[RMDB]
RNA sequence: GGGAACGACUCGAGUAGAGUCGAAAAGAUAUGGACCCUCUAGGGAGCUUGAUGGUCGGAAACGACCAAAGAGCGAGGAUCUAGACAUGGGUCCUAAGUCAAACGAGGUAACUUCGGUUACCUCGAACCCAAAGCGUUAGUUCGCUAACGCUUUGGGAAAAGAAACAACAACAACAAC
Reactivity to DMS in 0.01 (KOAc 150mM, MgCl2 10mM, bicine 150mM(pH8.5), 24C), signal-to-noise 2, nucleotides 027 to 126: g020a030u000a030u010g040g000a010c000c030c060u010c000u000a000g000g010g000a000g000c010u000u040g000a300u050g000g000u000c000g010g010a000a030a040c010g040a000c000c000a000a000a300g000a000g040c000g050a030g010g000a000u010c000u000a050g020a040c300a170u030g020g000g000u000c020c000u030a010a060g000u000c000a120a090a290c010g000a000g000g000u000a000a030c000u000u050c170g020g020u000u000a000c000c000u000c000g040a040a040